Structure probing data (2A3 and DMS) for a 177-nucleotide construct. Conditions: 150 mM KOAc, 10 mM MgCl2 and 150 mM bicine (pH 8.5), 24 C. Source: RMDB library OK2TRN, as collected in RNAgym. Reactivities are given for positions 27 through 126.
[RMDB]
RNA sequence: GGGAACGACUCGAGUAGAGUCGAAAAGUAAAUGACUUCCUGGCAUUUAUUUACUACACAUCUGGGACCAAGUAUGGUGAGCCAGGAGAUGCCGAGUUUACAUUCUCAAAACUUAUGAAUUACACACGUAUCCAAUACUGUUCGCAGUAUUGGAUACAAAAGAAACAACAACAACAAC
Reactivity to 2A3 in 0.01 (KOAc 150mM, MgCl2 10mM, bicine 150mM(pH8.5), 24C), signal-to-noise 4, nucleotides 027 to 126: g000u020a030a020a020u040g040a030c030u050u040c030c020u010g000g010c020a020u080u160u070a160u090u200u090a240c080u130a030c090a010c010a150u060c060u090g010g080g050a070c050c030a070a030g100u060a110u150g020g050u050g060a020g060c010c010a010g080g020a010g000a000u100g030c060c030g010a020g020u000u000u020a020c010a030u060u000c010u000c000a060a150a070a060c110u210u170a120u300g170a150a180u240u280a050c100a010c000a000c160
Reactivity to DMS in 0.01 (KOAc 150mM, MgCl2 10mM, bicine 150mM(pH8.5), 24C), signal-to-noise 4, nucleotides 027 to 126: g000u000a000a010a040u000g000a090c040u000u010c020c020u000g010g000c000a110u000u000u010a070u030u010u000a060c090u020a080c090a060c070a080u010c080u000g010g010g010a100c120c110a030a110g030u000a050u000g020g020u000g020a110g030c000c010a000g010g000a020g000a040u010g020c050c050g010a120g000u010u000u010a040c050a120u000u000c010u010c020a090a120a090a110c190u000u000a060u020g010a090a080u000u010a120c190a040c210a080c240